Conditions: 150 mM KOAc, 10 mM MgCl2 and 150 mM bicine (pH 8.5), 24 C. Chemical mapping of a 177-nucleotide RNA with 2A3 and DMS.
[RMDB]
RNA sequence: GGGAACGACUCGAGUAGAGUCGAAAAGCGUGAACAGACCCUUGAACGGCUCAUCCACGCCCACAUGCCCCGCCACCUUCAUGGCGCGGGUGAAGAAGCGCGAAUAGAGCAGAUGCAGGAUCGCGUAUACUCGCAAAAUGUUCGCAUUUUGCGAGUAAAAAGAAACAACAACAACAAC
Reactivity to 2A3 in 0.01 (KOAc 150mM, MgCl2 10mM, bicine 150mM(pH8.5), 24C), signal-to-noise 1, nucleotides 027 to 126: g040c000g000u030g020a070a020c020a070g100a110c030c000c000u050u110g130a150a050c030g030g000c010u000c010a000u000c040c000a000c030g020c030c030c000a080c030a040u160g030c000c000c000c000g000c010c030a050c020c050u290u220c060a060u060g030g000c010g030c120g050g000g050u020g010a010a020g040a040a010g000c000g010c000g020a010a050u110a160g080a020g000c090a060g050a230u280g010c000a010g000g060a040u020c000g000c020g000u020a000
Reactivity to DMS in 0.01 (KOAc 150mM, MgCl2 10mM, bicine 150mM(pH8.5), 24C), signal-to-noise 3, nucleotides 027 to 126: g010c040g040u000g010a040a070c080a200g010a090c050c010c010u000u010g030a140a170c200g000g000c090u030c090a180u000c030c010a020c020g000c000c010c020a150c300a130u030g000c000c010c010c000g000c000c000a080c160c140u000u010c230a170u000g000g000c060g000c170g020g000g030u000g020a070a080g000a060a100g020c010g000c020g020a000a040u010a300g000a030g020c000a110g010a120u000g040c050a050g010g010a190u000c010g000c050g000u000a090

The DMS profile rests on 1,476 reads. DMS adducts were read by reverse transcription with MarathonRT. Values cover nucleotides 27 to 126. The 2A3 profile rests on 1,464 reads.